[RMDB]
RNA sequence: GGGAACGACUCGAGUAGAGUCGAAAAGGUCAAUCUAGAGUUGCCCUCGGUUCAGAUGAAGACAACGAUUACAUGAUGUUGAUUCGUAUGAUAAACAUGUGGGCAUAUCCACUCAACUUCGCUGAUCGAACAAAAGAUAGUUCGCUAUCUUUUGUUCAAAAGAAACAACAACAACAAC
Reactivity to 2A3 in 0.01 (KOAc 150mM, MgCl2 10mM, bicine 150mM(pH8.5), 24C), signal-to-noise 9, nucleotides 027 to 126: g030g000u030c020a010a080u030c080u140a060g010a030g070u020u030g020c000c000c000u010c030g060g010u040u020c010a020g010a100u040g020a040a030g160a150c010a010a010c030g100a060u130u230a110c110a180u290g050a070u240g110u020u010g010a040u030u000c010g010u050a040u070g040a050u120a040a150a010c050a070u230g010u030g020g000g000c030a020u030a040u040c020c010a020c020u030c010a040a120c040u110u100c070g030c120u050g020a070u080c080
Reactivity to DMS in 0.01 (KOAc 150mM, MgCl2 10mM, bicine 150mM(pH8.5), 24C), signal-to-noise 9, nucleotides 027 to 126: g010g010u010c040a050a070u010c080u010a120g010a100g010u000u000g010c020c010c000u000c040g010g010u000u000c020a030g000a080u010g010a040a030g010a120c050a020a040c040g010a120u000u010a130c270a140u010g010a100u010g010u000u000g000a300u000u000c020g010u000a060u010g000a070u010a080a050a040c080a040u010g020u010g000g000g010c120a080u000a070u010c080c090a090c050u000c070a060a070c070u000u000c100g010c100u000g010a050u010c080